Notes
Conditions: 150 mM KOAc, 10 mM MgCl2 and 150 mM bicine (pH 8.5), 24 C. Structure probing data (DMS) for a 207-nucleotide construct.
[RMDB]
RNA sequence: GGGAACGACUCGAGUAGAGUCGAAAAUGGCCCAAGGGCACUCCGCAGUCCUUCCUGAAGCUAGGUUUCCUGAGUCCAGCCCUGGGCUUCCACCUGGCAGGUGUGGAGACCAGGGCUGCUGCCUCUGCUGCCUGAUGGACAUUCCGCCCAGGCUGGGCGGUUCUCAGAAGUUCGCUUCUGAGAACCGAAAAGAAACAACAACAACAAC
Reactivity to DMS in 0.01 (KOAc 150mM, MgCl2 10mM, bicine 150mM(pH8.5), 24C), signal-to-noise 2, nucleotides 027 to 156: u010g000g030c030c010c010a090a130g030g000g020c060a070c050u030c030c060g010c080a140g020u010c020c000u000u010c040c030u010g000a130a140g010c050u000a030g000g010u000u000u000c050c020u000g000a120g000u000c110c030a050g010c020c000c010u010g020g010g060c010u000u000c000c010a020c000c020u020g040g000c160a210g040g020u000g010u000g000g000a000g000a040c010c000a030g040g020g010c000u000g000c000u010g010c040c030u000c030u010g010c040u010g010c000c010u000g010a110u010g000g020a050c030a230u000u000c040c050g010c010c010c010a130g000g020c050u000g010g000g030